Conditions: 150 mM KOAc, 10 mM MgCl2 and 150 mM bicine (pH 8.5), 24 C.
The record gives the reactivity of an RNA of 177 nucleotides to DMS and 2A3.
Reactivities are rounded to 0.1 and cut off at 0 and 3.

[RMDB]
RNA sequence: GGGAACGACUCGAGUAGAGUCGAAAACCCACGAUCAGUUUUCGUGAAGAAUUUUUGACGGGACCAGAGGCUACCCGUAGGUGACCCGCUUACUUUUGCGGGACGCCUGCGUUGCGAAUCCUCCGUCGGUAGGUAACUAGUUCGCUAGUUACCUACCAAAAGAAACAACAACAACAAC
Reactivity to DMS in 0.01 (KOAc 150mM, MgCl2 10mM, bicine 150mM(pH8.5), 24C), signal-to-noise 5, nucleotides 027 to 126: c000c000c010a100c060g010a060u020c120a120g000u000u000u000u000c030g010u030g020a150a120g000a080a070u020u000u000u030u010g010a010c020g000g020g000a100c130c130a140g000a040g000g010c100u010a100c230c050c000g020u000a000g000g020u010g020a120c000c010c020g010c000u010u010a110c240u020u020u010u010g000c000g040g000g010a030c010g030c000c000u000g000c000g000u020u030g000c080g010a110a110u010c020c020u000c010c100g020u010c050
Reactivity to 2A3 in 0.01 (KOAc 150mM, MgCl2 10mM, bicine 150mM(pH8.5), 24C), signal-to-noise 9, nucleotides 027 to 126: c000c000c000a000c000g010a050u110c110a160g130u100u120u100u040c020g020u050g070a130a070g080a190a200u080u110u090u180u240g010a000c000g000g000g030a030c040c050a050g020a010g140g000c010u050a050c020c010c000g000u000a000g000g000u030g040a130c000c010c010g010c020u070u110a210c070u100u220u170u150g010c010g010g010g020a040c010g000c010c000u000g000c000g020u050u100g010c020g010a040a040u020c000c010u010c010c000g020u010c030
About this RNA
Source: RMDB libraries RFM100 and RFMREP, as collected in RNAgym.